[RMDB]
RNA sequence: GGGAACGACUCGAGUAGAGUCGAAAAUGACUCAUUCUUUAUUCUAUUUUAGUUGGUUUGUAUCUUGCCUAAGGUGCGUAGUCCAACUCUUGGUAUUACCCUCCUAAUAGUCAUACUAGUAGUCAUACAAUAGAUAGGCCUUCGGGCCUAUCUAUUGAAAAGAAACAACAACAACAAC
Reactivity to DMS in 0.01 (KOAc 150mM, MgCl2 10mM, bicine 150mM(pH8.5), 24C), signal-to-noise 1, nucleotides 027 to 126: u000g000a070c040u000c030a090u020u000c070u000u000u010a040u060u010c030u000a030u000u010u010u000a060g010u010u000g010g020u000u010u020g000u010a030u010c000u000u010g000c180c210u000a040a030g020g050u000g000c030g010u000a050g000u010c000c000a030a050c080u000c170u020u000g010g020u000a090u010u000a110c080c040c020u000c070c050u010a030a050u000a030g000u000c080a050u000a130c100u000a090g020u010a080g000u000c050a050u000a130
An RNA of 177 nucleotides, treated with DMS and read out base by base. The reactions ran in a buffer of 150 mM KOAc, 10 mM MgCl2 and 150 mM bicine (pH 8.5), at 24 C. DMS adducts were read by reverse transcription with MarathonRT.